[RMDB]
RNA sequence: GGGAACGACUCGAGUAGAGUCGAAAAAUACCACCUCUACGGAGGUGGUCAAGUCACGUAGCUAGUACCAGGUUGCAAUACUAGAGCGUUAGUCCUGGGGCGUACGGUGGCAGUACGCUGCCACCGAUAAAACUUGAAUACUUCGGUAUUCAAGUAAACACUUAUAAGGUUUCGACCUUAUAAGUGUAAAAGAAACAACAACAACAAC
Reactivity to 2A3 in 0.01 (KOAc 150mM, MgCl2 10mM, bicine 150mM(pH8.5), 24C), signal-to-noise 3, nucleotides 027 to 156: a000u140a010c000c000a000c000c010u000c010u010a050c250g100g000a000g000g000u010g010g000u010c010a070a030g050u020c020a010c040g010u020a010g080c010u000a010g000u030a160c010c010a010g010g000u010u000g000c010a000a000u000a010c000u000a010g000a010g010c040g100u140u160a000g020u070c010c000u010g010g000g010g060c160g060u170a050c020g020g010u010g000g000c010a000g000u030a030c280g020c070u010g000c000c000a000c000c000g010a010u010a020a040a000a010c000u000u000g000a000a000u000a000c000u010u060c200g060g010u000a000u000u000c000a000a000g000u000a030a040
Reactivity to DMS in 0.01 (KOAc 150mM, MgCl2 10mM, bicine 150mM(pH8.5), 24C), signal-to-noise 2, nucleotides 027 to 156: a120u010a050c010c010a010c010c000u010c010u010a070c300g060g010a030g030g060u000g000g020u000c030a000a070g000u000c080a150c040g020u000a090g020c010u000a010g010u000a050c020c020a050g000g000u000u000g020c030a120a060u000a020c000u000a030g030a300g000c010g000u000u000a040g020u000c010c000u000g020g020g000g010c130g010u010a040c000g010g030u010g010g110c030a030g000u000a080c230g040c050u010g010c000c000a020c000c000g000a010u000a010a060a130a060c000u000u000g000a030a010u000a000c000u010u000c300g050g020u000a000u000u000c000a010a000g010u000a010a070